Chemical mapping of a 177-nucleotide RNA with 2A3. It was measured as part of the RMDB library OK1LIB. Values cover nucleotides 27 to 126.

RNA sequence: GGGAACGACUCGAGUAGAGUCGAAAAUGGGCCGCAUCACCGCCGUAGUCAUGUCGCUGUCCGGCGCGUAGUAGCCGCCGAUGUCCACCGGUUCGCCUUGUACCUCGGUGAGCUCUCGCACGAUGACGGUUUGGGCGCUAUUCGUAGCGCCCAAACCAAAAGAAACAACAACAACAAC
Reactivity to 2A3 in 0.01 (KOAc 150mM, MgCl2 10mM, bicine 150mM(pH8.5), 24C), signal-to-noise 1, nucleotides 027 to 126: u190g010g000g000c010c000g140c070a070u040c070a000c060c100g040c000c020g110u050a020g020u000c080a010u030g050u060c020g000c090u030g010u020c000c000g000g010c030g000c000g010u030a020g000u080a000g000c020c000g030c000c010g000a000u010g040u090c060c080a090c140c020g000g010u000u030c090g080c040c000u000u030g040u070a030c030c030u010c000g020g030u020g070a070g000c000u000c000u000c030g030c020a050c000g140a170u120g030a070c000
Overview: For 2A3 the reverse transcriptase was SuperScript II with manganese. The RNA was probed in 150 mM KOAc, 10 mM MgCl2 and 150 mM bicine (pH 8.5) at 24 C.